[RMDB]
RNA sequence: GGGAACGACUCGAGUAGAGUCGAAAAGAAAACUACUUGAACCCGAUCAGUAGGACGCGAUUGUCGCAGUGAACUUGUUGAAGAGUAUGUGCCUACAUCAGAAAUCAUUGGCAGACCGUGAAACAAAGGGUAUUCUUAACUUCGGUUAAGAAUACCCAAAAGAAACAACAACAACAAC
Reactivity to DMS in 0.01 (KOAc 150mM, MgCl2 10mM, bicine 150mM(pH8.5), 24C), signal-to-noise 1, nucleotides 027 to 126: g030a010a210a070a130c000u020a040c000u020u040g020a030a090c000c000c000g040a010u030c010a030g000u000a050g020g000a220c020g000c000g000a180u020u020g010u000c010g000c000a070g000u000g010a020a120c160u000u050g000u000u000g000a250a130g000a040g010u010a070u010g060u000g040c000c020u020a150c210a040u000c120a150g000a100a060a070u000c120a020u010u020g000g100c090a020g000a060c060c000g100u000g000a120a030a010c110a020a100a140
Reactivity to 2A3 in 0.01 (KOAc 150mM, MgCl2 10mM, bicine 150mM(pH8.5), 24C), signal-to-noise 1, nucleotides 027 to 126: g130a050a110a000a000c070u070a010c000u100u140g070a090a070c020c000c030g030a140u020c060a000g020u070a000g030g010a090c000g000c000g160a100u110u200g000u080c020g000c000a000g030u000g010a120a180c100u020u110g000u100u220g160a000a000g000a000g050u130a110u190g090u170g010c000c000u000a000c000a070u000c000a000g130a040a120a000u050c000a010u030u050g050g010c060a060g000a010c000c000g110u050g010a100a000a000c070a070a110a000
This 177-nucleotide RNA was probed chemically with DMS and 2A3. For 2A3 the reverse transcriptase was SuperScript II with manganese. Reactivities are given for positions 27 through 126. The RNA was probed in 150 mM KOAc, 10 mM MgCl2 and 150 mM bicine (pH 8.5) at 24 C. Source: RMDB library OK1LIB, as collected in RNAgym.